[RMDB]
RNA sequence: GGGAACGACUCGAGUAGAGUCGAAAAGCAAUUGGAAAAGCUGUGAGAAAGAUAACAAAUGAUGUGCACAAGACCUUGGUUAUCGGGAGUGCCUUUUGGAAUUCUGAUCAGCGAAUUUCCAGUUUAAUAUUAUACUCGGUUUCGACCGAGUAUAAUAAAAAGAAACAACAACAACAAC
Reactivity to 2A3 in 0.01 (KOAc 150mM, MgCl2 10mM, bicine 150mM(pH8.5), 24C), signal-to-noise 2, nucleotides 027 to 126: g070c020a020a030u030u030g010g000a000a010a000a010g000c010u010g010u040g020a060g050a060a140a000g070a070u100a130a020c020a000a030a030u160g100a040u110g120u130g070c010a030c020a090a120g090a150c040c020u120u220g210g010u300u230a240u300c000g000g020g010a040g000u010g000c010c010u030u010u020u000g040g010a050a020u080u010c010u020g030a050u070c000a010g020c010g070a010a050u010u020u020c000c000a000g000u020u000u020a070a060
Reactivity to DMS in 0.01 (KOAc 150mM, MgCl2 10mM, bicine 150mM(pH8.5), 24C), signal-to-noise 5, nucleotides 027 to 126: g000c140a040a020u010u000g000g000a020a010a030a230g010c000u000g010u000g010a250g010a070a090a100g000a080u000a070a180c010a020a010a040u000g010a110u010g020u010g020c010a020c030a070a130g010a120c020c010u000u000g050g010u010u010a060u000c090g010g010g010a130g000u000g010c000c010u000u000u010u000g010g000a110a110u000u000c010u000g000a110u000c010a020g020c000g020a080a090u000u000u000c010c010a040g000u000u000u000a060a130

The data come from the RNA Mapping Database (RMDB), library OK2TRN. An RNA of 177 nucleotides, treated with 2A3 and DMS and read out base by base. Reactivities are given for positions 27 through 126. Conditions: 150 mM KOAc, 10 mM MgCl2 and 150 mM bicine (pH 8.5), 24 C. For 2A3 the reverse transcriptase was SuperScript II with manganese.